[RMDB]
RNA sequence: GGGAACGACUCGAGUAGAGUCGAAAACUGCAGGCCCGCGACAUCGCCCAGACUCGCUCGCGGCCGUACCAGAAGAACGACCAGGCCCAUGUCGAGUCCAAGAACAAUCAUGUGGUGCGCAAACACGGGGUCAUCGGAGUUUCGACUCCGAUGACCCAAAAGAAACAACAACAACAAC
Reactivity to 2A3 in 0.01 (KOAc 150mM, MgCl2 10mM, bicine 150mM(pH8.5), 24C), signal-to-noise 1, nucleotides 027 to 126: c060u100g010c080a150g200g000c060c000c000g040c050g000a070c010a060u010c000g000c030c000c000a000g050a220c000u000c070g180c000u000c100g010c020g000g020c000c000g000u000a000c010c000a000g120a300a020g000a130a160c030g000a060c060c030a170g070g000c000c000c000a000u090g170u140c000g000a000g000u000c040c020a090a160g020a240a000c030a000a130u140c050a140u140g000u020g150g030u060g000c020g000c030a180a070a000c020a050c090g000